[RMDB]
RNA sequence: GGGAACGACUCGAGUAGAGUCGAAAAAUUAUUAAUCAUCGUCUAUGCCUUAACUAUCUUGUCGGCCAUCCGUGGGUUGCGGUGGUUAUGAUAAAUAAAAAAGAGGGCCGAGAGGUAGGCGGCCCAAUUCGCUGGGAAUGCGUUCUCUACGCCAUAAUGAUAAUCAAUAUUUCGAUAUUGAUUAUCAAAAAGAAACAACAACAACAAC
Reactivity to 2A3 in 0.01 (KOAc 150mM, MgCl2 10mM, bicine 150mM(pH8.5), 24C), signal-to-noise 3, nucleotides 027 to 156: a000u150u100a060u040u160a070a040u030c020a000u020c000g060u000c100u130a090u160g020c020c000u100u110a080a040c010u030a040u160c050u080u050g150u090c060g000g010c030c030a050u110c040c010g060u040g060g060g040u110u110g030c010g000g010u020g020g000u040u040a040u070g010a000u010a050a090a020u090a010a060a000a000a010a010g080a080g020g000g040c020c010g010a000g000a020g030g030u030a020g000g030c000g000g000c000c010c020a020a060u070u080c020g020c060u080g000g020g040a070a090u100g010c000g000u100u000c030u000c010u020a060c030g050c070c010a020u070a170a060
Reactivity to DMS in 0.01 (KOAc 150mM, MgCl2 10mM, bicine 150mM(pH8.5), 24C), signal-to-noise 2, nucleotides 027 to 156: a090u020u000a120u000u000a070a090u000c010a050u000c030g010u000c060u000a090u010g010c000c010u000u000a070a140c060u010a090u000c040u000u000g020u000c010g020g000c030c020a000u010c020c060g020u010g020g010g010u010u010g020c000g000g000u010g010g000u010u000a030u010g020a100u010a030a020a140u070a050a070a070a060a090a140g000a280g010g020g070c020c030g000a140g020a050g030g020u000a030g020g020c030g000g000c050c020c010a030a040u000u000c080g000c040u020g020g030g010a110a160u000g010c010g010u000u000c040u010c040u010a110c030g000c000c010a030u000a080a230
This 207-nucleotide RNA was probed chemically with 2A3 and DMS. It was measured as part of the RMDB library OK3TST. The RNA was probed in 150 mM KOAc, 10 mM MgCl2 and 150 mM bicine (pH 8.5) at 24 C.